RNA sequence: GGGAACGACUCGAGUAGAGUCGAAAAACGGCCUGCGCGAAACCGUGCCGGUGCGCCCCGCCGGAGCGCGGCAACUGCUGUCGGGGUCCGGAUCGGUGGGCGCGGACAAGGCUGGGGGCAACGCCAGGCUCAGCCUCAGUUUCGACUGAGGCUGAGCAAAAGAAACAACAACAACAAC
Reactivity to DMS in 0.01 (KOAc 150mM, MgCl2 10mM, bicine 150mM(pH8.5), 24C), signal-to-noise 1, nucleotides 027 to 126: a090c150g000g010c000c000u000g010c060g020c000g000a090a170a070c020c000g020u020g010c000c020g000g040u000g020c020g040c000c010c000c010g010c030c000g000g020a020g000c000g000c000g000g010c000a000a190c270u000g000c210u010g050u000c020g010g010g020g030u010c000c010g000g000a040u040c060g020g030u000g040g000g020c010g000c000g010g010a070c150a200a220g000g060c000u000g010g010g000g040g000c190a110a100c070g000c070c040a050g010
Reactivity to 2A3 in 0.01 (KOAc 150mM, MgCl2 10mM, bicine 150mM(pH8.5), 24C), signal-to-noise 1, nucleotides 027 to 126: a020c000g060g040c020c000u080g000c020g000c000g130a080a010a020c020c010g120u080g000c020c010g000g040u130g010c010g000c000c000c000c000g000c000c010g020g000a050g040c290g020c020g070g030c010a000a060c200u300g080c060u020g030u010c030g000g080g000g240u000c000c000g010g040a130u270c080g100g060u200g120g000g000c000g000c000g000g010a050c030a150a000g020g000c000u030g010g040g000g080g000c060a070a000c030g010c050c020a010g060

This 177-nucleotide RNA was probed chemically with DMS and 2A3. The data come from the RNA Mapping Database (RMDB), library OK2TRN. The reactions ran in a buffer of 150 mM KOAc, 10 mM MgCl2 and 150 mM bicine (pH 8.5), at 24 C. Reactivities are rounded to 0.1 and cut off at 0 and 3. In probing experiments dimethyl sulfate is read out at A N1 and C N3, which are open when not base-paired.